[RMDB]
RNA sequence: GGGAACGACUCGAGUAGAGUCGAAAAGCGCGAAGCGGUGUAGCGUCACUUUGAUGGCGGUACUAUGAAUUGAUGCAAGGUGUGGAGCGACCUUAAACAGUUCUGGUGGUGCUCUGAAUGGAGAGCUUGAGGCCUCGCCGAUUCGUCGGCGAGGCAACUAGGCCAAAUACUUCGGUAUUUGGCCUAGAAAAGAAACAACAACAACAAC
Reactivity to 2A3 in 0.01 (KOAc 150mM, MgCl2 10mM, bicine 150mM(pH8.5), 24C), signal-to-noise 2, nucleotides 027 to 156: g020c020g020c030g080a040a050g030c030g030g000u020g020u050a020g060c010g010u000c010a020c050u120u190u300g150a200u090g050g000c020g010g080u040a030c040u060a060u210g050a070a040u060u070g050a030u090g130c060a060a020g000g000u040g000u090g050g010a010g010c000g020a050c000c000u110u090a080a170a030c050a060g000u030u020c040u050g030g000u040g000g010u020g010c000u000c000u040g060a070a050u140g040g060a030g010a010g070c000u010u090g110a050g120g000c000c000u000c010g000c000c000g010a020u000u070c230g050u020c000g030g000c010g000a000g000g000c000a000a000
Source information: Structure probing data (2A3) for a 207-nucleotide construct. Reactivities are given for positions 27 through 156. Conditions: 150 mM KOAc, 10 mM MgCl2 and 150 mM bicine (pH 8.5), 24 C.